[RMDB]
RNA sequence: GGGAACGACUCGAGUAGAGUCGAAAAAUAAUUACGUAUUUACAAAAUACCGUCUCAAUUCAUCCUAUUUCAUCAGAUCCGGGAUGUGAUAUGGUUCCGAAGGAUGAACCGGAUAUGGACAGUUCCAGAUGCGGUCCUGAUUCGUCAGGACCGCAUCAAAAGAAACAACAACAACAAC
Reactivity to 2A3 in 0.01 (KOAc 150mM, MgCl2 10mM, bicine 150mM(pH8.5), 24C), signal-to-noise 1, nucleotides 027 to 126: a000u220a050a070u140u000a000c000g000u000a060u000u200u000a070c090a000a110a000a220u170a000c030c030g150u000c000u000c000a180a300u300u300c140a080u010c000c090u020a030u050u030u160c120a190u000c000a000g000a290u000c000c030g050g000g020a000u000g000u040g000a030u010a050u290g070g000u030u010c000c000g120a100a040g300g020a030u050g000a000a000c000c000g000g000a020u020a100u030g140g020a010c180a090g050u000u000c000c000a020